[RMDB]
RNA sequence: GGGAACGACUCGAGUAGAGUCGAAAAGGGUCUGUUUUUUUACUUCUUUUGCGGUGAAAAUGCCAAUGGUUCCAUUCCAUAUUUGGUUACCUGAAGCGCAUGUAGAAGCCCCUACUGCCGGAUCCGUGUUACUUGCUGGGGUCUUAUUAAAGCUCGGCGAUGUGAGACUAUUCGUAGUCUCACAUCGAAAAGAAACAACAACAACAAC
Reactivity to 2A3 in 0.01 (KOAc 150mM, MgCl2 10mM, bicine 150mM(pH8.5), 24C), signal-to-noise 1, nucleotides 027 to 156: g030g010g000u040c050u010g000u080u040u060u000u000u000u180a060c030u110u090c080u050u260u070u280g030c010g020g110u100g050a190a070a020a020u140g010c030c030a010a090u010g000g060u150u250c030c000a040u180u000c020c030a060u040a160u230u020u080g060g000u170u030a040c000c030u050g060a100a000g040c000g000c140a040u110g000u020a000g020a250a000g000c060c000c000c000u060a050c090u000g040c040c000g060g020a050u040c040c000g080u120g020u010u150a070c060u070u070g010c010u010g000g040g040g000u010c010u110u040a070u050u240a160a120a000g030c010u000c010g000g000